This 207-nucleotide RNA was probed chemically with 2A3.
[RMDB]
RNA sequence: GGGAACGACUCGAGUAGAGUCGAAAACACCUGCUGUGGUCACCUUGCCAGGCCCUUCUCUGUAGACACAGGAGACCGAUCUUGAGGAGCCAGAGGCAGAGCCCAGCUGGGAGCCGGGGUUUCACUGGUCAGUCGGUCAGUCUCUGCAGCUGCAGCCGUUUUCCUAUUAAUUCGUUAAUAGGAAAACAAAAGAAACAACAACAACAAC
Reactivity to 2A3 in 0.01 (KOAc 150mM, MgCl2 10mM, bicine 150mM(pH8.5), 24C), signal-to-noise 2, nucleotides 027 to 156: c060a030c010c010u010g000c030u050g040u120g110g030u100c060a060c150c030u080u060g030c040c060a050g020g020c040c010c010u110u080c040u010c020u060g070u080a050g090a090c050a020c020a150g000g060a040g030a030c030c010g050a100u050c050u180u220g080a070g030g020a050g070c020c010a040g020a070g130g030c070a020g020a000g030c020c000c000a010g010c020u080g020g100g080a030g010c040c010g030g000g010g000u050u140u180c030a040c020u020g050g020u050c020a050g080u040c030g050g010u010c020a010g050u000c030u000c000u050g020c040a030g010c010u040g020c000a010g070c010c050
The data come from the RNA Mapping Database (RMDB), library OK3TST. Conditions: 150 mM KOAc, 10 mM MgCl2 and 150 mM bicine (pH 8.5), 24 C.